Source information
Structure probing data (DMS) for a 207-nucleotide construct. Source: RMDB library M2RFPK, as collected in RNAgym.
RNA sequence: GGGAACGACUCGAGUAGAGUCGAAAAGCCAUGAGUCGCAACGCAAAGCCGCGGCAAGUGGAGUUAGCGCGAAGAGACUAGGCUUUGGUUUCUUCAAGUGAAGCGGUCACCAAUCAGGUGUGGUAGUAGGAGCCUGCAUGGUUCGCCAUGCAGGCAAACCCCUAUAAACGUUCGCGUUUAUAGGGGUAAAAGAAACAACAACAACAAC
Reactivity to DMS in 0.01 (KOAc 150mM, MgCl2 10mM, bicine 150mM(pH8.5), 24C), signal-to-noise 1, nucleotides 027 to 156: g010c000c010a020u000g010a300g010u000c010g030c000a090a040c000g050c050a100a160a250g050c040c010g030c000g050g020c070a050a240g020u000g000g000a090g030u000u000a220g030c040g010c150g000a060a050g010a060g020a020c030u010a080g040g010c130u000u000u000g030g030u000u000u000c010u000u000c030a090a260g030u010g000a050a040g030c050g010g000u010c010a050c040c000a110a170u010c070a140g000g000u000g000u010g050g000u000a070g020u020a110g000g000a100g010c010c010u000g030c000a000u010g020g020u000u000c300g020c030c010a010u000g050c000a000g000g020c030a020a020